[RMDB]
Structure probing data (DMS and 2A3) for a 177-nucleotide construct.
Source: RMDB library OK2TST, as collected in RNAgym.
Values cover nucleotides 27 to 126.
The RNA was probed in 150 mM KOAc, 10 mM MgCl2 and 150 mM bicine (pH 8.5) at 24 C.
RNA sequence: GGGAACGACUCGAGUAGAGUCGAAAAGGGGAGUGAGUUGUGGCAGCUAUUGCCGGAGCUUCAUCACCCGGAAAGCGCAAUAUCUGUGAAUAAAACGGCUUGUGAUUCGUUUUAUCGAACUUCACUCGCUUCCUUCUUUGUUCGCAAAGAAGGAAGCAAAAGAAACAACAACAACAAC
Reactivity to DMS in 0.01 (KOAc 150mM, MgCl2 10mM, bicine 150mM(pH8.5), 24C), signal-to-noise 1, nucleotides 027 to 126: g030g000g020g020a070g020u000g010a040g010u000u010g010u000g020g010c020a010g020c190u010a040u000u020g020c010c160g000g000a090g020c080u010u000c110a090u000c170a170c030c020c000g010g000a040a040a100g000c140g000c060a020a040u000a030u010c030u000g040u020g020a150a030u000a020a000a030a020c000g020g000c160u010u020g020u020g010a120u010u000c010g000u000u000u000u000a040u010c070g010a070a070c080u000u010c010a020c060u000c060
Reactivity to 2A3 in 0.01 (KOAc 150mM, MgCl2 10mM, bicine 150mM(pH8.5), 24C), signal-to-noise 1, nucleotides 027 to 126: g100g010g010g020a060g060u010g030a020g010u000u060g190u070g270g000c010a010g030c080u110a050u200u140g030c000c000g020g020a010g000c030u260u010c040a090u150c040a050c000c000c000g000g060a060a040a000g220c100g000c030a080a050u050a100u160c020u050g070u060g050a090a030u050a070a030a000a000c010g020g000c080u120u230g080u160g080a250u030u060c010g030u000u030u090u070a050u060c020g060a010a030c030u110u030c030a010c030u030c000